[RMDB]
RNA sequence: GGGAACGACUCGAGUAGAGUCGAAAAAUUAAUGAUUACGGUGAGAGGGUGACGACAUUCAUGAUUCAUGUCGGGAACUUCCUCAGGAGGCGAAACAAAGAAUACUCGGUCGACUAUUGUCGUCAAAAAAUUGACAAGAUGGACCUUCGCUUUUCACCUUCCUAGGUAGAUUCGUCUACCUAGGAAGAAAAGAAACAACAACAACAAC
Reactivity to 2A3 in 0.01 (KOAc 150mM, MgCl2 10mM, bicine 150mM(pH8.5), 24C), signal-to-noise 2, nucleotides 027 to 156: a000u170u130a040a050u110g040a040u060u150a030c020g000g030u020g040a120g010a010g010g010g040u020g030a000c000g000a000c000a030u030u130c040a030u190g110a160u170u070c080a010u060g010u020c000g000g020g000a010a040c000u090u070c010c020u020c030a020g030g030a000g000g010c030g010a050a000a000c090a020a140a040g080a100a080u120a150c050u060c080g000g000u030c030g070a030c040u020a050u050u080g000u010c000g000u000c000a000a070a080a110a030a120u120u170g010a000c020a030a040g030a120u130g000g000a010c000c000u020u010c010g020c000u030u030u060u020c000a010c000
Reactivity to DMS in 0.01 (KOAc 150mM, MgCl2 10mM, bicine 150mM(pH8.5), 24C), signal-to-noise 1, nucleotides 027 to 156: a100u000u000a080a090u010g050a170u000u000a100c000g030g020u000g020a110g030a030g010g020g090u010g000a150c040g000a030c010a060u000u000c060a090u000g050a200u000u000c070a030u010g080u080c020g000g000g030a070a080c090u010u010c000c030u000c050a140g020g010a050g030g020c000g010a090a040a120c120a110a040a160g000a120a080u000a020c030u010c060g030g050u000c030g050a060c040u000a130u010u010g000u000c050g030u000c030a000a050a090a090a080a140u030u040g010a080c020a040a080g010a090u000g030g060a050c000c000u000u010c020g030c080u000u000u000u000c020a160c180

Record summary
Structure probing data (2A3 and DMS) for a 207-nucleotide construct. Conditions: 150 mM KOAc, 10 mM MgCl2 and 150 mM bicine (pH 8.5), 24 C. The DMS profile rests on 1,932 reads. Values cover nucleotides 27 to 156. It was measured as part of the RMDB library OK3TST. 2A3 adducts were read by reverse transcription with SuperScript II with manganese.